[RMDB]
RNA sequence: GGGAACGACUCGAGUAGAGUCGAAAACAAGGUCUUGAACAUUAUAAUUGCGCUUCAGGCGGGGACCUGUCCCAGCCUCGCGCUGUGCGGCGGGACGGAAGGGCGAGGGUCUAAUGUCAUCGAGAGUCGAUUAGGUUGUUAUAAUCACUCCACAAUAACUACCACAACCAUUCGUGGUUGUGGUAGUAAAAGAAACAACAACAACAAC
Reactivity to 2A3 in 0.01 (KOAc 150mM, MgCl2 10mM, bicine 150mM(pH8.5), 24C), signal-to-noise 1, nucleotides 027 to 156: c050a020a040g000g000u000c010u130u120g100a100a010c020a080u100u110a130u260a170a170u160u090g010c040g000c040u090u120c010a040g030g020c060g010g000g000g020a060c000c030u050g060u040c020c000c000a000g000c000c000u000c050g010c030g040c000u030g080u040g010c060g010g040c020g040g000g000a020c050g030g080a070a050g090g010g040c110g030a120g020g010g010u000c000u070a050a030u110g070u160c030a120u080c110g070a040g000a000g190u120c110g010a000u010u010a000g070g000u010u010g010u000u000a010u000a050a000u030c000a000c030u000c060c000a090c040a130a060u140a040